[RMDB]
Record summary:
The data come from the RNA Mapping Database (RMDB), library M2PK90. This 177-nucleotide RNA was probed chemically with 2A3 and DMS. The reactions ran in a buffer of 150 mM KOAc, 10 mM MgCl2 and 150 mM bicine (pH 8.5), at 24 C. For DMS, 1,175 sequencing reads were counted. The 2A3 profile rests on 1,488 reads. High 2A3 reactivity points to a flexible backbone, as in loops and unpaired stretches. For DMS the reverse transcriptase was MarathonRT. In probing experiments dimethyl sulfate is read out at A N1 and C N3, which are open when not base-paired.
RNA sequence: GGGAACGACUCGAGUAGAGUCGAAAAAUAAAAUGUGCGUCCCUCCCGAAGCUGCGCGCUCGGUGGAAGAGGACGACCAUCGCCGAUAGAGGACGACCGGUCUUCGGUCAAGGGAAAAAGAAAAAAAGCUAUUAUAAGACUUCGGUCUUAUAAUAGCAAAAGAAACAACAACAACAAC
Reactivity to 2A3 in 0.01 (KOAc 150mM, MgCl2 10mM, bicine 150mM(pH8.5), 24C), signal-to-noise 2, nucleotides 027 to 126: a000u090a010a110a000a000u050g070u070g030c000g000u030c000c000c000u020c000c000c000g040a090a010g000c000u040g080c070g000c030g020c170u010c000g040g020u110g120g020a130a050g050a180g010g000a000c000g010a000c030c010a030u070c040g040c060c000g050a040u130a160g120a060g030g040a050c060g020a010c030c050g020g040u090c110u230u190c060g000g000u030c040a030a050g050g010g000a000a110a040a130a060g120a000a100a050a040a010a030a000
Reactivity to DMS in 0.01 (KOAc 150mM, MgCl2 10mM, bicine 150mM(pH8.5), 24C), signal-to-noise 2, nucleotides 027 to 126: a040u000a060a070a090a030u000g000u000g000c020g000u000c000c000c010u010c020c000c010g010a070a090g020c000u010g020c180g010c110g000c010u000c010g000g050u000g020g000a070a040g000a140g020g010a020c020g000a040c030c040a050u000c090g000c030c030g000a130u010a100g020a060g000g000a060c090g010a170c020c050g000g000u000c060u000u000c010g010g010u000c030a070a120g010g010g000a020a110a040a070a090g020a010a010a060a120a060a050a120